[RMDB]
RNA sequence: GGGAACGACUCGAGUAGAGUCGAAAAUGCUCAAGCUGCGACCCAAGCAAGCCCUGUUCUAGGUGUCAGCUACAUGAUUGGUCUCUUUAUGAUGUCUGUGUGCGCGGAUGACUUGCUGGAUUAUCACACGGUGUCGAAUAUUCGUAUUCGACACCGUAAAAGAAACAACAACAACAAC
Reactivity to DMS in 0.01 (KOAc 150mM, MgCl2 10mM, bicine 150mM(pH8.5), 24C), signal-to-noise 4, nucleotides 027 to 126: u010g010c050u000c060a140a110g030c040u010g010c100g010a130c040c010c040a120a090g000c100a060a110g010c040c010c020u020g000u000u020c060u000a070g000g010u000g010u010c060a070g000c050u000a080c110a070u000g000a080u000u000g000g040u000c060u000c060u000u000u000a080u020g010a070u010g010u000c020u000g030u010g020u000g010c080g020c060g010g020a060u010g000a070c010u000u000g020c020u000g000g000a130u010u000a090u010c070a100c260
Reactivity to 2A3 in 0.01 (KOAc 150mM, MgCl2 10mM, bicine 150mM(pH8.5), 24C), signal-to-noise 2, nucleotides 027 to 126: u130g020c020u010c060a000a030g000c020u040g000c010g040a070c020c000c000a010a020g020c000a030a010g040c000c010c010u070g000u120u040c050u080a080g060g000u030g020u050c020a020g000c010u030a030c020a060u110g020a090u080u110g080g000u010c030u020c020u060u150u060a160u150g060a050u050g030u040c020u020g100u030g020u040g020c080g000c010g030g010a070u080g020a040c040u020u040g010c010u010g040g040a100u080u090a100u210c020a030c010